[RMDB]
RNA sequence: GGGAACGACUCGAGUAGAGUCGAAAAGCGUGGCCGCGCCGACGACACCGACGACGUCAUCCUCAACCGGAUGAAGGUCUACCGCGACGAGACCGCGCCGCUGCUGGAGUACUACCGCGACCAAUUGUCCAUCGAUCCCUUUCGAGGGAUCGAUGGAAAAAGAAACAACAACAACAAC
Reactivity to DMS in 0.01 (KOAc 150mM, MgCl2 10mM, bicine 150mM(pH8.5), 24C), signal-to-noise 1, nucleotides 027 to 126: g020c060g010u000g010g050c040c000g030c020g010c040c010g010a090c040g010a150c160a070c260c140g010a070c090g040a140c040g000u000c000a010u000c000c000u000c120a130a190c120c190g020g040a010u000g010a060a050g000g030u000c080u010a140c190c040g040c020g000a050c020g000a150g020a010c000c000g000c090g000c020c040g000c060u000g000c000u000g000g000a090g030u000a070c140u000a130c070c010g010c040g000a130c040c010a060a240u020u010g000